[RMDB]
RNA sequence: GGGAACGACUCGAGUAGAGUCGAAAACGCUGAAUCCGUCAUGGAGCGGGGGACCCACUUGUUGCAACGCUCGUUGCUAGGGGUGAAUCCGAAAGGACGGGCAUCUCUCCAAGCCCGAACCCGACAGACUUCGGAAUGCCUUCGGGCAUUCCGAAGUAAAAGAAACAACAACAACAAC
Reactivity to DMS in 0.01 (KOAc 150mM, MgCl2 10mM, bicine 150mM(pH8.5), 24C), signal-to-noise 1, nucleotides 027 to 126: c010g000c000u000g020a080a070u040c070c040g000u020c160a090u140g020g000a040g000c060g000g000g000g030g000a090c000c000c000a200c210u000u020g000u000u030g000c000a040a010c000g030c100u000c150g030u000u000g000c000u000a000g000g000g000g000u010g000a090a160u000c040c000g000a090a160a160g000g000a040c020g060g000g000c000a020u030c140u030c050u000c020c140a090a160g000c040c020c000g000a090a020c020c000c000g030a300c030a090g000
Reactivity to 2A3 in 0.01 (KOAc 150mM, MgCl2 10mM, bicine 150mM(pH8.5), 24C), signal-to-noise 2, nucleotides 027 to 126: c000g000c060u100g080a160a290u060c100c000g020u090c080a230u300g040g000a100g020c030g020g000g000g000g100a010c010c000c000a170c090u080u130g120u050u130g000c000a000a000c010g010c190u040c130g040u000u040g000c000u040a000g030g010g000g000u000g040a040a030u000c000c000g000a030a030a000g060g000a000c010g010g000g000c000a030u000c080u000c010u060c090c050a040a040g010c000c010c010g000a000a000c000c000c000g030a030c000a050g080

The record gives the reactivity of an RNA of 177 nucleotides to DMS and 2A3. For DMS the reverse transcriptase was MarathonRT. It was measured as part of the RMDB library RFM100. The reactions ran in a buffer of 150 mM KOAc, 10 mM MgCl2 and 150 mM bicine (pH 8.5), at 24 C.